[RMDB]
Conditions: 150 mM KOAc, 10 mM MgCl2 and 150 mM bicine (pH 8.5), 24 C. An RNA of 177 nucleotides, treated with DMS and 2A3 and read out base by base. In probing experiments dimethyl sulfate is read out at A N1 and C N3, which are open when not base-paired. The 2A3 profile rests on 2,577 reads.
RNA sequence: GGGAACGACUCGAGUAGAGUCGAAAAGGGAUAAACUCACUUAUGCCUAUAGCAGUUGCUGCUAAAAAAGGACUUCCUAUCUUAGAUGCAGAUUCUAUGGGUAGAGCUUUCCCUGAAGCUCAAAUGGCGGUAUGAUGGUCUUCGGACCAUCAUACCGAAAAGAAACAACAACAACAAC
Reactivity to DMS in 0.01 (KOAc 150mM, MgCl2 10mM, bicine 150mM(pH8.5), 24C), signal-to-noise 2, nucleotides 027 to 126: g000g030g000a030u050a040a010a130c010u000c020a240c170u010u040a300u030g020c000c000u000a010u000a020g000c300a010g000u040u010g020c000u000g010c000u020a020a010a030a040a110a010g000g000a230c130u000u020c030c010u010a060u020c050u000u000a000g000a120u030g000c010a030g000a100u020u010c000u000a000u000g010g000g020u000a140g000a040g020c080u000u010u010c000c000c000u030g000a070a070g000c020u010c000a090a170a080u060g000g020
Reactivity to 2A3 in 0.01 (KOAc 150mM, MgCl2 10mM, bicine 150mM(pH8.5), 24C), signal-to-noise 5, nucleotides 027 to 126: g070g000g010a050u140a170a080a030c010u030c030a080c090u220u140a110u300g020c000c000u010a000u010a010g030c080a060g050u120u130g040c050u060g000c010u080a060a040a000a030a000a020g030g050a150c070u300u160c040c000u100a110u050c040u030u100a060g010a080u100g000c000a000g000a130u050u030c000u000a010u000g030g000g010u050a040g000a000g010c030u010u080u010c000c000c000u000g030a020a020g040c000u000c080a080a080a070u190g160g030